[RMDB]
RNA sequence: GGGAACGACUCGAGUAGAGUCGAAAAGAACUCACCAGCAAAUGUUUACGACAAGAUUCGACAUUUGCAAAUUACGUAGCGAUCUUCCAGAAUCUUGUCGAAACGUUCCCAUUCGCUACGCCCUAAAGAUUACUUAUAAGUUCGCUUAUAAGUAAUCAAAAGAAACAACAACAACAAC
Reactivity to 2A3 in 0.01 (KOAc 150mM, MgCl2 10mM, bicine 150mM(pH8.5), 24C), signal-to-noise 6, nucleotides 027 to 126: g020a050a030c020u020c040a060c020c030a010g070c050a010a070a110u130g040u120u190u180a070c010g000a000c000a010a010g000a020u010u030c020g040a020c090a140u150u150u200g020c020a040a040a020u110u080a050c020g000u010a000g020c000g040a030u020c050u180u030c150c040a040g000a020a010u000c000u010u010g000u010c000g050a060a050a000c020g000u000u000c000c000c000a020u030u000c080g000c000u010a010c000g000c020c000c000u080a070a070a000
Reactivity to DMS in 0.01 (KOAc 150mM, MgCl2 10mM, bicine 150mM(pH8.5), 24C), signal-to-noise 6, nucleotides 027 to 126: g000a110a090c090u000c060a100c110c060a120g010c080a040a050a040u000g000u000u000u000a300c040g000a020c010a010a010g000a020u000u000c010g000a090c160a070u010u000u010g010c090a060a050a070u000u010a070c040g020u000a020g010c000g000a020u010c130u010u020c160c120a110g000a020a010u000c010u000u000g000u010c000g020a010a050a170c040g010u000u000c000c000c000a120u000u000c010g020c010u000a010c010g010c010c030c020u000a060a080a080